Description
An RNA of 177 nucleotides, treated with 2A3 and DMS and read out base by base. For DMS, 14,763 sequencing reads were counted. For 2A3 the reverse transcriptase was SuperScript II with manganese. For 2A3, 32,504 sequencing reads were counted. Conditions: 150 mM KOAc, 10 mM MgCl2 and 150 mM bicine (pH 8.5), 24 C. The data come from the RNA Mapping Database (RMDB), library TTRDES.

RNA sequence: GGGAACGACUCGAGUAGAGUCGAAAAGAUAUGGAUCCACAGGAGCAUCGAUCUGGUCAGUCGGAAACGACUGCCAGGGAGCUCCGUGGAUCCUAAGUCAAACUGCACGAUGUUCGCAUCGUGCAGACUUUAUCUAUUGCUUCGGCAAUAGAUAAAGAAAAGAAACAACAACAACAAC
Reactivity to 2A3 in 0.01 (KOAc 150mM, MgCl2 10mM, bicine 150mM(pH8.5), 24C), signal-to-noise 6, nucleotides 027 to 126: g000a010u010a000u060g000g000a000u020c030c030a020c160a260g040g020a010g000c020a040u300c080g040a030u000c010u010g000g060u300c070a000g000u000c000g010g000a020a000a000c000g000a000c010u000g010c000c000a000g000g000g000a010g000c000u000c000c000g000u000g000g000a000u000c000c000u000a000a000g010u000c000a030a080a140c000u010g000c000a000c000g000a010u010g080u130u130c300g030c200a000u000c000g000u000g010c010a000g000a000
Reactivity to DMS in 0.01 (KOAc 150mM, MgCl2 10mM, bicine 150mM(pH8.5), 24C), signal-to-noise 6, nucleotides 027 to 126: g000a010u000a050u010g000g000a010u000c000c010a010c000a090g030g010a020g030c000a300u000c240g000a010u010c000u000g000g000u020c020a020g010u000c000g030g010a010a010a030c000g020a010c010u000g010c000c000a010g010g000g000a010g020c000u000c000c010g020u000g000g000a000u000c000c000u000a000a070g000u000c000a140a120a270c010u000g000c000a010c000g000a020u000g010u000u020c270g020c000a010u000c000g010u000g000c000a000g010a060